[RMDB]
RNA sequence: GGGAACGACUCGAGUAGAGUCGAAAACAACGUUGACCGAAACCCUUUCACGAGAAUAAUGAAAUUUCGUGUAAAGGCCAAAUGCGAUUUGUCUUCCAUGCAUCCUCGUCGGUCAGUGAGGGUUGCACGCUAAUCAUUAGUUCGCUAAUGAUUAGCGAAAAGAAACAACAACAACAAC
Reactivity to DMS in 0.01 (KOAc 150mM, MgCl2 10mM, bicine 150mM(pH8.5), 24C), signal-to-noise 3, nucleotides 027 to 126: c070a040a080c020g000u010u000g000a000c000c020g010a150a130a200c300c010c010u000u000u000c000a010c010g000a020g010a030a010u020a110a120u040g030a110a100a080u010u000u000c000g020u010g010u030a030a010a000g000g010c120c120a070a030a050u020g000c010g000a120u040u010u000g000u010c010u000u010c020c020a070u020g010c000a000u010c000c000u000c020g010u010c010g000g000u010c020a070g010u010g010a040g000g000g000u000u020g000c020a140
Reactivity to 2A3 in 0.01 (KOAc 150mM, MgCl2 10mM, bicine 150mM(pH8.5), 24C), signal-to-noise 9, nucleotides 027 to 126: c020a000a010c020g020u020u030g010a000c000c010g030a110a070a070c000c000c000u000u000u000c000a000c000g020a020g100a070a070u230a160a140u220g190a130a140a150u050u030u010c000g000u000g030u180a010a000a000g020g060c020c030a110a170a060u300g020c030g090a110u030u020u050g030u010c040u040u010c010c010a050u080g000c000a010u010c000c000u020c010g080u010c020g010g010u000c000a010g020u030g010a010g020g030g030u060u090g000c010a000

Overview:
The record gives the reactivity of an RNA of 177 nucleotides to DMS and 2A3. Conditions: 150 mM KOAc, 10 mM MgCl2 and 150 mM bicine (pH 8.5), 24 C. For 2A3 the reverse transcriptase was SuperScript II with manganese. Values cover nucleotides 27 to 126. For DMS the reverse transcriptase was MarathonRT. The DMS profile rests on 7,402 reads.